[RMDB]
Description: An RNA of 207 nucleotides, treated with 2A3 and read out base by base. The reactions ran in a buffer of 150 mM KOAc, 10 mM MgCl2 and 150 mM bicine (pH 8.5), at 24 C. 2A3 adducts were read by reverse transcription with SuperScript II with manganese. Reactivities are given for positions 27 through 156.
RNA sequence: GGGAACGACUCGAGUAGAGUCGAAAAUCGAUCUCGAGAGUGUGAUCGUACUCGAGUUCGAGUGUUCGUGUACUCACUCACGAGUGUACUCGUUCACGUACGAGAGAGAGUACUCGAACUCACACGUGUGUUCGAGAUCUCGAGUUCGUGAACUCUCCCCUUACUCGUGCUUCGGCACGAGUAAGGGAAAAGAAACAACAACAACAAC
Reactivity to 2A3 in 0.01 (KOAc 150mM, MgCl2 10mM, bicine 150mM(pH8.5), 24C), signal-to-noise 3, nucleotides 027 to 156: u070c010g000a010u020c010u010c020g020a020g000a030g060u170g050u140g110a190u130c080g070u080a070c020u010c010g010a010g030u040u060c030g010a040g000u050g130u010u030c030g010u030g040u070a040c000u000c030a000c000u020c000a030c140g020a060g010u030g050u080a100c050u040c120g070u040u050c030a010c020g030u070a030c000g000a000g000a000g000a000g000a000g110u040a040c020u000c000g000a000a000c000u050c020a050c000a010c100g130u100g010u010g020u120u030c020g010a020g010a080u030c000u000c010g000a020g000u030u070c000g000u000g010a020a010c010u010c000u050c010